[RMDB]
RNA sequence: GGGAACGACUCGAGUAGAGUCGAAAAGGCCGAGCGCCAAGGGAGGGAGGGAAUAUAUACAAGGGGCGAUUUAAGGCGCAAGUAUGUAUAGGGAAGUGAAGAAGCGCCGAAAACUUCACACGGCCGACCUCCAUAAUAAUUUCGAUUAUUAUGGAGGAAAAGAAACAACAACAACAAC
Reactivity to 2A3 in 0.01 (KOAc 150mM, MgCl2 10mM, bicine 150mM(pH8.5), 24C), signal-to-noise 2, nucleotides 027 to 126: g000g040c010c000g030a040g020c070g010c070c080a030a020g060g040g080a290g000g020g040a070g050g050g040a070a000u100a000u000a010u010a140c080a110a080g080g020g000g000c020g010a000u040u110u250a080a020g010g000c000g010c010a000a010g120u160a090u180g110u010a090u060a070g000g030g020a080a030g030u030g010a020a000g000a050a010g000c030g000c010c010g020a030a030a000a010c000u030u050c010a000c000a000c030g040g010c000c000g000a010
Chemical mapping of a 177-nucleotide RNA with 2A3. For 2A3 the reverse transcriptase was SuperScript II with manganese. The RNA was probed in 150 mM KOAc, 10 mM MgCl2 and 150 mM bicine (pH 8.5) at 24 C. The data come from the RNA Mapping Database (RMDB), library OK2TRN.